An RNA of 177 nucleotides, treated with 2A3 and DMS and read out base by base. The data come from the RNA Mapping Database (RMDB), library RFM100. For DMS the reverse transcriptase was MarathonRT.
RNA sequence: GGGAACGACUCGAGUAGAGUCGAAAAAGCGUGAGGGGCUGCAUUGCAAAGGUUGGUGACCUACCGUGAUGAACUGAAAAAGAUUCAAAGUAGCGGUUUGAGCAAUGUGUAUAGACAGUAACCCGGUCGCUAGUUUCUUUUUCGAAAGAAACUAGCGAAAAGAAACAACAACAACAAC
Reactivity to 2A3 in 0.01 (KOAc 150mM, MgCl2 10mM, bicine 150mM(pH8.5), 24C), signal-to-noise 2, nucleotides 027 to 126: a000g040c050g040u090g050a100g000g050g000g000c020u000g010c010a010u000u020g010c000a020a020a020g060g000u010u090g110g120u230g080a010c000c000u010a000c010c000g000u000g040a300u020g000a020a000c020u000g060a050a100a060a030a000g090a170u000u020c020a060a140a070g020u000a020g050c000g010g000u050u030u180g020a030g010c000a000a000u010g020u020g000u030a040u030a170g140a020c040a000g060u060a010a070c010c000c000g010g050u000
Reactivity to DMS in 0.01 (KOAc 150mM, MgCl2 10mM, bicine 150mM(pH8.5), 24C), signal-to-noise 1, nucleotides 027 to 126: a020g020c110g000u030g010a080g000g000g000g000c110u000g020c000a000u000u030g000c010a030a010a060g030g000u010u010g020g000u050g020a130c000c000u000a040c000c000g020u000g010a150u010g010a010a010c030u000g020a050a170a060a130a000g000a130u000u000c000a040a100a150g010u020a160g000c020g020g020u000u000u070g000a060g000c000a010a010u000g000u030g010u000a070u020a070g000a090c070a040g040u010a070a110c030c000c010g010g010u020